[RMDB]
RNA sequence: GGGAACGACUCGAGUAGAGUCGAAAAUAGGUGGUAUGAGCUACUUUUGUGUAGAUCAUAGACCUGUGUGUAGUUUUCCACUUUGCGCUAAUGGUCUUGUAUUCGGCUUAUACAAGAAUAUGUGCACUGAGUGGCUAGUUCGCUAGCCACAAAAGAAACAACAACAACAAC
Reactivity to 2A3 in 0.01 (KOAc 150mM, MgCl2 10mM, bicine 150mM(pH8.5), 24C), signal-to-noise 7, nucleotides 027 to 129: u090a010g000g020u040g100g090u020a000u010g010a010g000c000u010a000c010u090u240u300u270g300u130g000u040a000g000a020u000c000a000u010a000g020a020c000c000u000g000u000g000u000g020u020a190g010u060u030u000u050c010c000a020c000u010u010u040g000c000g000c000u030a070a070u130g150g000u000c000u000u000g010u030a040u020u120c090g180g000c180u160u130a020u000a020c000a020a000g020a000a000u020a040u020g020u020g000c010a010c000u050g040a020
Reactivity to DMS in 0.01 (KOAc 150mM, MgCl2 10mM, bicine 150mM(pH8.5), 24C), signal-to-noise 5, nucleotides 027 to 129: u000a020g000g000u010g020g050u020a070u010g000a000g030c020u010a030c020u030u030u060u070g050u080g030u010a050g010a070u010c020a030u000a050g010a030c000c000u020g000u010g020u040g040u050a050g000u000u000u000u000c000c000a200c040u010u020u020g040c010g000c010u030a050a060u040g000g000u020c020u050u030g000u030a010u000u000c250g000g000c150u000u000a060u010a020c030a020a020g010a060a030u030a110u000g020u000g000c000a040c100u040g010a090